The record gives the reactivity of an RNA of 207 nucleotides to 2A3 and DMS.
DMS adducts were read by reverse transcription with MarathonRT.

[RMDB]
RNA sequence: GGGAACGACUCGAGUAGAGUCGAAAAGAGCCGGGGGGAUCACAUGAGGUCAGGAGUUCGAGACCAGCCUGACCAACAUGAUGAAACCCUGUGUCUACCGAAAAUACAAAAUUAGCUGAGCAUGGUGGCGCACGUCUGCAAUCCCUGCUACUUGGGACGUUGAUUACAUUUUCGAAUGUAAUCAACGAAAAGAAACAACAACAACAAC
Reactivity to 2A3 in 0.01 (KOAc 150mM, MgCl2 10mM, bicine 150mM(pH8.5), 24C), signal-to-noise 4, nucleotides 027 to 156: g100a020g080c050c030g020g010g000g000g000g010a020u070c010a000c010a030u030g010a020g000g000u000c010a010g020g020a060g040u180u240c150g090a060g070a090c030c030a010g050c010c010u010g010a000c010c010a020a020c000a000u110g060a060u030g010a030a020a020c010c000c010u000g000u020g020u000c020u020a060c000c000g080a040a070a030a010u190a050c080a030a070a040a040u160u100a030g070c050u050g040a010g000c030a050u070g000g030u030g030g010c020g010c020a030c030g090u040c050u050g020c010a010a040u050c000c010c000u020g040c030u050a080c030u070u050g010g010g010a020
Reactivity to DMS in 0.01 (KOAc 150mM, MgCl2 10mM, bicine 150mM(pH8.5), 24C), signal-to-noise 2, nucleotides 027 to 156: g000a180g050c140c030g000g000g040g050g020g020a140u000c000a050c000a060u000g000a300g050g000u000c000a030g010g000a080g000u010u000c060g020a120g020a050c090c070a160g010c010c010u000g010a040c010c000a030a120c010a020u010g000a100u010g000a060a090a170c010c010c000u000g030u000g020u000c010u000a080c060c020g010a010a040a060a080u000a180c080a050a020a070a090u000u010a060g010c000u010g000a100g000c010a070u020g010g040u000g050g020c000g000c040a010c070g040u000c030u000g000c060a060a130u000c000c000c000u020g010c020u010a070c030u000u000g030g000g010a190
Annotation:
Values cover nucleotides 27 to 156. Reactivities are rounded to 0.1 and cut off at 0 and 3. The RNA was probed in 150 mM KOAc, 10 mM MgCl2 and 150 mM bicine (pH 8.5) at 24 C.